The record gives the reactivity of an RNA of 207 nucleotides to DMS and 2A3. Source: RMDB library M2RFPK, as collected in RNAgym. Conditions: 150 mM KOAc, 10 mM MgCl2 and 150 mM bicine (pH 8.5), 24 C. For DMS the reverse transcriptase was MarathonRT. For 2A3, 2,340 sequencing reads were counted.

[RMDB]
RNA sequence: GGGAACGACUCGAGUAGAGUCGAAAACGUGUCCGUCGGCGUAGCCGACAACAUGCCCAGGUAGCCCAGACCUUCAAGGAUACGGUGCGUUGCGACGCACGGUCUGAUUCUUCACAACGACGUUCACAAGAUCGGAUCACUUUCGAGUGAUCCGAAACGCGUAUAAGACAUUCGUGUCUUAUACGCGAAAAGAAACAACAACAACAAC
Reactivity to DMS in 0.01 (KOAc 150mM, MgCl2 10mM, bicine 150mM(pH8.5), 24C), signal-to-noise 1, nucleotides 027 to 156: c020g030u000g020u000c020c080g060u000c000g030g000c010g070u000a160g020c020c010g020a090c010a010a020c010a070u000g000c000c000c020a130g040g030u000a060g020c010c050c060a110g020a040c040c000u000u000c110a100a210g000g000a000u000a060c020g000g030u000g000c040g030u000u000g040c120g000a130c040g030c050a040c000g000g000u000c030u000g010a180u000u000c050u000u010c000a090c050a070a140c090g000a060c030g000u010u000c020a050c080a130a130g010a250u000c000g010g000a070u000c010a000c000u010u000u000c220g080a050g040u020g000a000u000c010c000g000a000a010a060
Reactivity to 2A3 in 0.01 (KOAc 150mM, MgCl2 10mM, bicine 150mM(pH8.5), 24C), signal-to-noise 4, nucleotides 027 to 156: c020g000u010g020u080c100c080g000u010c030g000g030c230g140u150a100g030c000c000g000a000c000a010a000c010a010u070g030c010c000c000a020g020g060u040a050g010c010c030c070a020g000a020c000c000u040u020c080a040a040g040g000a060u050a090c030g070g000u000g000c010g000u010u110g090c170g090a020c000g010c010a000c030g000g000u010c000u030g010a050u090u040c070u180u130c070a080c040a240a110c130g130a040c060g050u070u160c070a070c050a150a040g050a150u020c010g000g010a010u010c010a010c000u020u060u130c140g060a010g000u000g000a000u000c000c000g000a000a000a000